[RMDB]
RNA sequence: GGGAACGACUCGAGUAGAGUCGAAAACGGAUCCGUUGAGGGAGCAUGCAUCAGCGCUGGUGGACUACCAGAACAAGGAGCGCACAGAGGAUGUACUGCGCAUUGCCAGCUUUGCGCUGGGAGUCCCUGCCAACGUGUGUUUCGACACACGUUGGCAAAAAGAAACAACAACAACAAC
Reactivity to 2A3 in 0.01 (KOAc 150mM, MgCl2 10mM, bicine 150mM(pH8.5), 24C), signal-to-noise 1, nucleotides 027 to 126: c010g030g020a000u070c010c030g000u090u090g090a110g010g060g020a050g040c040a000u060g040c010a080u030c030a160g080c100g000c070u140g000g040u070g030g040a040c000u050a080c000c020a070g030a040a040c030a020a040g090g010a060g100c010g000c000a000c000a040g160a110g100g020a040u130g020u220a080c120u060g000c030g000c030a010u020u300g060c000c000a060g050c080u080u150u150g010c040g020c030u080g000g060g000a010g030u050c000c000c000
Reactivity to DMS in 0.01 (KOAc 150mM, MgCl2 10mM, bicine 150mM(pH8.5), 24C), signal-to-noise 1, nucleotides 027 to 126: c100g000g000a070u000c030c010g000u000u030g020a120g000g000g000a080g000c020a030u090g000c060a050u000c090a090g020c120g010c090u000g000g010u000g020g010a000c090u000a060c000c010a040g000a060a050c110a040a090g010g020a100g000c040g010c000a030c200a050g000a200g000g020a040u000g020u000a150c090u000g050c030g020c060a080u000u010g030c070c100a130g000c050u000u000u040g000c300g020c000u020g030g010g000a120g010u000c000c000c150
An RNA of 177 nucleotides, treated with 2A3 and DMS and read out base by base. For DMS the reverse transcriptase was MarathonRT. Source: RMDB library OK2TST, as collected in RNAgym.